[RMDB]
An RNA of 207 nucleotides, treated with 2A3 and DMS and read out base by base. Reactivities are given for positions 27 through 156.

RNA sequence: GGGAACGACUCGAGUAGAGUCGAAAACAGACCUUCGGGUCUGCUUAUGCGUACUACAGGAGAUACCGCAAGACCGAAGAACGUUCUCCCAAAUAGGAGAACGGGAGGUCUUGAACUACGGUUCUCCUGUAUCGCCCGCUAGGGACUUCGGUCCCAACUAUAGAAGACUCUUCGGAGUCUUCUAUAGAAAAGAAACAACAACAACAAC
Reactivity to 2A3 in 0.01 (KOAc 150mM, MgCl2 10mM, bicine 150mM(pH8.5), 24C), signal-to-noise 3, nucleotides 027 to 156: c010a000g000a000c000c010u060u150c290g100g000g000u000c000u000g000c000u150u160a150u280g030c020g050u050a060c060u010a000c050a000g020g000a000g020a060u210a170c000c010g000c020a000a000g000a000c000c010g120a190a010g020a060a030c000g000u000u000c000u080c000c010c020a210a300a120u280a160g010g000a010g000a010a000c000g000g000g000a010g000g000u000c000u010u000g000a030a010c050u110a020c020g000g000u000u000c000u000c000c000u000g000u010a000u000c010g000c000c000c000g140c130u260a190g010g010g000a000c040u070u090c300g090g000u040c030c020c000a000a000
Reactivity to DMS in 0.01 (KOAc 150mM, MgCl2 10mM, bicine 150mM(pH8.5), 24C), signal-to-noise 1, nucleotides 027 to 156: c000a020g000a030c000c000u000u000c300g020g060g080u000c000u000g000c000u000u010a070u010g000c060g030u000a120c090u000a050c010a040g020g010a020g000a060u000a020c000c030g040c010a050a050g030a040c000c000g050a180a190g020a140a200c030g000u000u010c000u000c000c000c020a030a160a210u010a070g000g000a040g000a030a010c000g000g000g000a140g030g030u000c010u000u010g010a080a160c020u000a120c010g010g010u000u000c000u010c000c000u000g010u000a000u000c040g000c000c040c040g010c120u000a140g000g000g010a040c010u000u000c140g020g000u000c000c010c000a010a100
Overview:
The RNA was probed in 150 mM KOAc, 10 mM MgCl2 and 150 mM bicine (pH 8.5) at 24 C. The 2A3 profile rests on 1,933 reads.